[RMDB]
RNA sequence: GGGAACGACUCGAGUAGAGUCGAAAAGAAGCAGUCCUUAUUGUGUGUGAUGUUUAGUCAUCGCACUGUACCUACGGGCUGCCAACGUAGGCCCAAUGUGCCGAGAGGCACUAGAAGUACGGCUUAUUAUGAAGCAUCGCCGUACCAACGAUGCUGACAUUAGCAGGGCGUUCGCGCCCUGCUAAUGAAAAGAAACAACAACAACAAC
Reactivity to 2A3 in 0.01 (KOAc 150mM, MgCl2 10mM, bicine 150mM(pH8.5), 24C), signal-to-noise 1, nucleotides 027 to 156: g170a090a000g000c000a000g000u000c030c090u180u080a050u300u280g150u040g050u000g000u000g070a010u030g150u030u080u300a230g170u200c000a000u000c000g000c000a030c000u000g000u060a090c010c030u030a030c000g020g000g120c000u000g000c020c000a150a000c150g010u030a040g000g040c000c000c090a000a020u130g000u000g000c000c000g000a000g040a060g000g020c000a000c000u000a010g050a120a010g030u090a010c080g000g000c000u020u020a000u030u030a220u250g140a020a040g000c000a000u020c020g000c000c000g060u150a140c000c000a010a000c000g000a000u030g000c020u000g030a000
An RNA of 207 nucleotides, treated with 2A3 and read out base by base. Conditions: 150 mM KOAc, 10 mM MgCl2 and 150 mM bicine (pH 8.5), 24 C.